[RMDB]
RNA sequence: GGGAACGACUCGAGUAGAGUCGAAAAGGCAAUUACUGCGCGAGGAUCAUCAUCACGCAUACCCAUACAACGAAAUGCCAUCACAGAAUUCGCCAUUGCUGGAUAAAUCGCACCCAAUCCAUCCUCGACCCAAACUUUGUUUCGACAAAGUUUGGGUAAAAGAAACAACAACAACAAC
Reactivity to DMS in 0.01 (KOAc 150mM, MgCl2 10mM, bicine 150mM(pH8.5), 24C), signal-to-noise 1, nucleotides 027 to 126: g010g010c050a060a030u000u000a070c100u000g000c130g030c070g010a070g020g000a080u020c060a130u010c060a090u000c050a040c030g000c080a050u000a060c050c000c020a120u000a120c000a130a050c070g020a020a010a020u030g030c000c030a010u000c030a050c020a040g010a100a150u000u000c090g000c040c000a050u000u000g010c010u000g000g000a030u000a040a020a060u000c070g000c090a070c040c040c020a120a070u000c040c060a070u000c030c010u010c130g000
Reactivity to 2A3 in 0.01 (KOAc 150mM, MgCl2 10mM, bicine 150mM(pH8.5), 24C), signal-to-noise 2, nucleotides 027 to 126: g000g010c070a050a110u140u040a150c090u040g000c020g040c060g090a040g030g020a030u090c030a020u020c020a020u020c010a050c050g060c000a000u090a180c060c000c000a020u050a090c060a120a040c060g110a080a050a050u110g050c030c000a040u090c020a020c020a030g130a110a170u050u060c020g110c050c030a060u070u020g000c020u000g000g000a020u020a020a090a060u040c050g020c060a030c020c020c020a010a030u040c000c000a030u020c010c000u020c050g010